This 207-nucleotide RNA was probed chemically with 2A3. The RNA was probed in 150 mM KOAc, 10 mM MgCl2 and 150 mM bicine (pH 8.5) at 24 C.

RNA sequence: GGGAACGACUCGAGUAGAGUCGAAAACGCUGGGACUCAGGAAGGUGUAACAGACAUGACUGUCUAAACUCUGAAGCGCGCACGGAGUUUAGACAGUCAACAGCUGUUAGUACCGCUGAGUCCUGUGCUGAAGCGCGCACGGCAACCGAAAGGUGCGGAGAUUGUCUUACUUCGGUAAGACAAUCUCAAAAGAAACAACAACAACAAC
Reactivity to 2A3 in 0.01 (KOAc 150mM, MgCl2 10mM, bicine 150mM(pH8.5), 24C), signal-to-noise 2, nucleotides 027 to 156: c030g030c010u030g000g000g040a010c000u000c020a010g190g090a300a090g120g100u070g010u030a000a000c010a000g110a010c080a280u300g000a000c020u000g000u090c000u000a000a000a000c000u010c000u010g080a230a070g040c020g010c010g000c010a010c000g010g000a000g000u000u020u000a010g000a000c000a000g000u000c000a000a000c000a030g000c000u000g000u000u040a020g030u110a000c010c020g050c040u000g000a010g000u000c000c000u010g010u000g000c030u130g010a100a030g000c000g000c000g000c020a020c030g100g000c030a120a120c010c000g050a070a050a030g030g000u020g010c020g020